The record gives the reactivity of an RNA of 207 nucleotides to DMS and 2A3. Values cover nucleotides 27 to 156. The DMS profile rests on 2,828 reads. The data come from the RNA Mapping Database (RMDB), library RNAMAK.
RNA sequence: GGGAACGACUCGAGUAGAGUCGAAAAAUCUAGCCUUCGGGCUAGAUCACGAUCCUAAGUCCGUUGAAAGCAAGAAAUCCUUUGAUCUAUAUCGGAAACGAUAUAGGGAGGAUCUUGCUGGAGGAUAUGGAGUAAAUAGUCUGGUUCGCCAGACUAAGAGUUUGAAAAUCUUCGGAUUUUCAAACUCAAAAGAAACAACAACAACAAC
Reactivity to DMS in 0.01 (KOAc 150mM, MgCl2 10mM, bicine 150mM(pH8.5), 24C), signal-to-noise 1, nucleotides 027 to 156: a010u000c010u000a000g020c000c000u000u000c300g010g030g000c010u000a000g010a000u000c040a180c090g010a130u000c000c000u030a120a260g020u000c000c000g060u000u000g000a300a180a050g010c010a020a010g030a040a080a130u000c000c000u010u030u010g000a070u000c000u020a000u000a010u000c000g000g000a170a080a260c000g030a010u000a010u000a010g020g010g000a010g040g010a040u000c000u000u010g010c000u000g000g030a040g000g040a030u000a190u000g000g000a170g010u000a050a060a210u000a030g000u010c000u000g000g020u000u000c300g020c000c000a000g000a000c010u000a030a140
Reactivity to 2A3 in 0.01 (KOAc 150mM, MgCl2 10mM, bicine 150mM(pH8.5), 24C), signal-to-noise 1, nucleotides 027 to 156: a000u000c040u000a010g020c000c000u020u040c290g100g000g000c010u000a000g000a000u010c000a000c020g040a040u020c000c000u070a160a080g010u000c000c000g070u090u080g070a060a020a000g000c000a000a000g020a050a170a100u060c010c000u200u240u170g060a050u060c000u000a000u000a000u020c020g050g010a070a030a060c000g000a000u000a000u000a000g000g000g000a000g010g000a000u020c010u000u020g000c010u000g000g010a000g010g000a010u020a040u130g040g020a060g020u210a070a150a110u080a020g000u040c010u000g000g020u030u020c220g020c030c010a000g000a000c010u040a020a060